[RMDB]
Structure probing data (DMS and 2A3) for a 207-nucleotide construct. It was measured as part of the RMDB library M2RFPK. The reactions ran in a buffer of 150 mM KOAc, 10 mM MgCl2 and 150 mM bicine (pH 8.5), at 24 C.

RNA sequence: GGGAACGACUCGAGUAGAGUCGAAAAAGCUGCUCAGUAUACGUACUGAGCAGCAAGGGGUUGAAGCGGACACCCCUUCAGGCGCGCGCCCAAGCUCCGUACGCCGGCUCAUACGUGAGGCGGCGAAAUAGGUGUAUCUGGUUCGCCAGAUACACAAGAUAACAUAAGUGUUCGCACUUAUGUUAUCAAAAGAAACAACAACAACAAC
Reactivity to DMS in 0.01 (KOAc 150mM, MgCl2 10mM, bicine 150mM(pH8.5), 24C), signal-to-noise 1, nucleotides 027 to 156: a080g020c000u000g000c000u000c000a020g020u000a040u000a070c220g030u000a010c000u000g000a030g020c000a000g070c000a010a020g010g010g040g020u000u000g030a070a150g000c060g020g000a130c030a070c010c000c020c050u000u010c050a060g040g030c000g040c040g010c040g020c010c000c030a300a160g040c000u010c020c000g020u000a210c010g020c020c010g020g030c020u000c020a080u000a060c100g010u070g010a040g000g000c010g030g000c020g000a010a010a120u000a100g020g010u000g010u000a000u000c010u000g010g050u000u000c300g000c030c020a000g000a010u000a000c010a000c000a020a060
Reactivity to 2A3 in 0.01 (KOAc 150mM, MgCl2 10mM, bicine 150mM(pH8.5), 24C), signal-to-noise 5, nucleotides 027 to 156: a000g010c010u010g000c000u000c010a010g010u010a020u010a070c200g010u000a010c010u000g000a000g000c000a000g000c000a000a000g010g010g000g000u020u110g210a160a010g020c010g000g000a000c000a010c000c000c000c000u020u120c060a020g030g000c030g020c060g020c030g010c070c010c020a000a010g040c070u000c000c000g010u010a050c010g000c010c000g110g060c010u020c000a050u070a110c220g110u050g020a010g030g050c000g010g000c000g010a010a010a010u180a050g120g000u000g000u000a000u000c000u000g000g050u040u050c140g050c080c000a000g000a000u000a000c000a000c000a000a010